An RNA of 177 nucleotides, treated with 2A3 and DMS and read out base by base.
The 2A3 profile rests on 2,173 reads.
Conditions: 150 mM KOAc, 10 mM MgCl2 and 150 mM bicine (pH 8.5), 24 C.
For DMS the reverse transcriptase was MarathonRT.

[RMDB]
RNA sequence: GGGAACGACUCGAGUAGAGUCGAAAACAUGCCCGAUGGGGCGUGUGAAUGGAAAAGAAGGCGGGCGAUAGCGUCAAGAUCCUUCACACGGGCCGCGCUGUCAAAUUGAUCCCUCUGCAAAGAGUCAAUCAUAGCACUGGUUCGCCAGUGCUAUGAUAAAAGAAACAACAACAACAAC
Reactivity to 2A3 in 0.01 (KOAc 150mM, MgCl2 10mM, bicine 150mM(pH8.5), 24C), signal-to-noise 2, nucleotides 027 to 126: c000a020u040g010c010c010c010g030a150u220g030g030g010g020c000g000u000g020u000g040a020a100u200g020g040a040a070a050a110g100a060a070g030g000c010g000g000g040c080g080a050u090a120g080c000g000u020c010a030a000g040a090u020c000c020u010u050c020a000c010a000c050g010g020g000c040c020g000c020g000c020u030g020u030c030a060a040a210u080u090g020a050u050c000c020c040u030c000u020g000c030a160a020a000g020a050g030u060c050a040
Reactivity to DMS in 0.01 (KOAc 150mM, MgCl2 10mM, bicine 150mM(pH8.5), 24C), signal-to-noise 3, nucleotides 027 to 126: c090a040u000g010c000c010c030g020a120u000g010g020g010g000c000g000u000g020u000g000a070a050u020g030g000a080a070a100a120g010a170a090g010g000c030g010g000g000c060g000a100u010a180g000c010g030u000c060a060a130g010a120u000c000c010u010u000c080a040c070a070c150g010g000g010c030c060g000c060g020c030u000g000u010c040a020a100a090u020u010g010a130u020c000c040c000u000c020u000g010c080a040a100a120g000a030g010u010c110a110